[RMDB]
RNA sequence: GGGAACGACUCGAGUAGAGUCGAAAACUAUGCAGAUUCGUCUGCAUAGAGACCGGAUGAAGCGGCACUUACACAGCUUCAUACACGUAAGAAGUGCAAUAAAGGGACGAGGGUUCGCCCUCGUCAACAUUAUCAGUCACUUCGGUGACUGAUAAUGAAAAGAAACAACAACAACAAC
Reactivity to 2A3 in 0.01 (KOAc 150mM, MgCl2 10mM, bicine 150mM(pH8.5), 24C), signal-to-noise 8, nucleotides 027 to 126: c000u010a000u000g000c000a000g020a040u030u110c130g120u010c090u000g000c000a000u000a000g000a010g010a030c010c010g020g030a030u030g000a010a000g020c020g040g000c060a010c030u060u120a060c130a000c020a100g010c000u010u000c000a000u030a030c170a010c070g090u070a060a040g040a080a010g060u010g020c030a020a090u180a190a100a050g250g050g000a000c000g000a000g030g010g010u030u070c160g100c030c000c000u000c000g000u000c000a000a000
Reactivity to DMS in 0.01 (KOAc 150mM, MgCl2 10mM, bicine 150mM(pH8.5), 24C), signal-to-noise 6, nucleotides 027 to 126: c000u000a000u000g000c000a010g010a030u010u020c190g020u000c000u000g010c000a000u000a000g010a120g000a160c030c000g020g000a040u000g000a010a010g020c010g020g000c020a040c050u000u000a100c200a110c180a130g010c010u020u000c010a020u000a100c100a060c110g000u010a130a080g010a060a050g030u000g000c030a180a060u010a050a080a130g020g000g000a010c000g010a010g010g000g010u010u010c230g010c000c000c000u000c000g010u000c010a030a060

Chemical mapping of a 177-nucleotide RNA with 2A3 and DMS. Values cover nucleotides 27 to 126. The reactions ran in a buffer of 150 mM KOAc, 10 mM MgCl2 and 150 mM bicine (pH 8.5), at 24 C. For DMS the reverse transcriptase was MarathonRT. The DMS profile rests on 7,833 reads.